[RMDB]
RNA sequence: GGGAACGACUCGAGUAGAGUCGAAAAGAGGACCCCCUUCAGCGAACAGAAGAGCGUCAGACGCGUCAGGAGUAAGAGAUAGGGGGAGAUGCUUGGAGUUAGAGGAGACCGAAGGGAGGAGGAAAGCCACUUAUGAUUAGUUCGCUAAUCAUAAGUGAAAAGAAACAACAACAACAAC
Reactivity to 2A3 in 0.01 (KOAc 150mM, MgCl2 10mM, bicine 150mM(pH8.5), 24C), signal-to-noise 5, nucleotides 027 to 126: g080a030g060g090a070c010c010c000c020c020u020u020c010a060g040c010g050a060a030c020a070g090a110a010g040a050g030c020g030u030c050a050g040a200c030g020c010g100u020c020a010g010g060a080g040u080a100a030g050a020g010a100u110a080g010g000g000g000g010a010g000a010u070g010c030u020u060g040g020a080g010u070u030a030g040a030g090g000a040g020a040c030c050g010a040a020g030g010g000a040g000g010a010g010g030a090a020a000g040c020
Reactivity to DMS in 0.01 (KOAc 150mM, MgCl2 10mM, bicine 150mM(pH8.5), 24C), signal-to-noise 8, nucleotides 027 to 126: g000a110g000g020a210c030c010c010c030c010u000u000c060a090g020c040g000a080a060c050a070g010a130a060g000a110g010c070g020u000c120a090g020a200c070g010c040g010u000c050a060g010g010a130g010u000a070a110g000a080g000a050u010a040g020g000g000g000g010a040g000a060u010g010c050u010u000g010g000a070g010u000u000a080g000a090g010g000a110g000a070c080c050g020a080a060g000g000g000a050g010g000a060g000g000a050a060a090g010c170